This 177-nucleotide RNA was probed chemically with 2A3 and DMS. DMS adducts were read by reverse transcription with MarathonRT. The 2A3 profile rests on 8,337 reads. Conditions: 150 mM KOAc, 10 mM MgCl2 and 150 mM bicine (pH 8.5), 24 C.

[RMDB]
RNA sequence: GGGAACGACUCGAGUAGAGUCGAAAAGGAUGAAGCUGGGCGAGCAGAUGUCUACCGGUAAGCGCGUUACCAACCCAUCUGACGAUCCGAUCGCCGCGUCGCAGGCGGUAGUACUCUCUCAGGCGCAUAGGCGUAAUUAUUUCGAUAAUUACGCCUAAAAAGAAACAACAACAACAAC
Reactivity to 2A3 in 0.01 (KOAc 150mM, MgCl2 10mM, bicine 150mM(pH8.5), 24C), signal-to-noise 7, nucleotides 027 to 126: g090g020a070u150g090a060a010g020c020u040g010g020g020c020g030a050g030c040a010g020a080u050g060u060c020u090a090c030c050g030g020u060a080a050g070c080g010c040g160u050u070a050c010c010a020a050c000c010c020a030u010c030u040g050a050c040g040a050u040c030c030g000a030u050c030g000c030c010g000c020g030u070c040g020c060a070g030g060c020g020g000u010a020g020u020a050c010u000c000u000c000u000c030a020g040g020c020g000c070a050
Reactivity to DMS in 0.01 (KOAc 150mM, MgCl2 10mM, bicine 150mM(pH8.5), 24C), signal-to-noise 7, nucleotides 027 to 126: g000g000a050u010g000a090a080g010c030u000g000g000g000c070g010a070g020c050a070g010a080u020g000u020c050u010a100c150c060g010g010u010a070a100g000c090g010c070g020u010u020a060c040c040a080a130c100c080c010a060u020c040u000g000a110c100g000a080u000c060c040g000a090u000c050g000c010c020g000c050g020u010c060g020c060a110g010g000c010g010g010u010a050g010u010a100c040u000c020u000c020u000c030a050g000g000c050g000c090a160